Structure probing data (2A3 and DMS) for a 177-nucleotide construct. DMS adducts were read by reverse transcription with MarathonRT. Reactivities are given for positions 27 through 126.
[RMDB]
RNA sequence: GGGAACGACUCGAGUAGAGUCGAAAAGUUUGAUUUUUCCUUUUAACUGCAAUGAGGUCACACUUAGGCAUUUGUGACAUAGCAGCAGGUUGCCAUGGAGAUGAUAGCUUCAUCAGCAACUCUGCUUCAGCUUUUGAAGAUUCGUCUUCAAAAGCUGAAAAGAAACAACAACAACAAC
Reactivity to 2A3 in 0.01 (KOAc 150mM, MgCl2 10mM, bicine 150mM(pH8.5), 24C), signal-to-noise 5, nucleotides 027 to 126: g070u130u150u180g120a170u070u010u020u050u080c000c000u070u120u040u130a130a090c110u090g030c060a040a110u200g020a080g100g040u010c020a000c000a010c030u080u210a080g130g020c060a140u000u060u060g020u010g000a010c020a030u100a000g050c070a010g010c020a010g000g030u000u000g000c010c000a010u000g060g000a000g000a040u270g040a100u110a160g110c010u000u000c000a010u000c010a000g010c000a000a000c010u040c000u240g010c000u030u030
Reactivity to DMS in 0.01 (KOAc 150mM, MgCl2 10mM, bicine 150mM(pH8.5), 24C), signal-to-noise 2, nucleotides 027 to 126: g020u030u040u030g000a120u000u000u000u010u000c000c000u000u000u000u000a030a180c140u020g000c040a100a050u050g000a070g000g040u010c010a010c010a030c090u000u020a050g020g020c210a160u010u000u000g010u000g000a030c000a150u030a100g070c100a030g000c000a040g000g010u020u000g000c000c260a060u030g000g000a020g000a030u050g020a150u020a150g040c000u000u000c000a010u000c300a150g000c000a020a010c000u060c010u020g000c040u040u030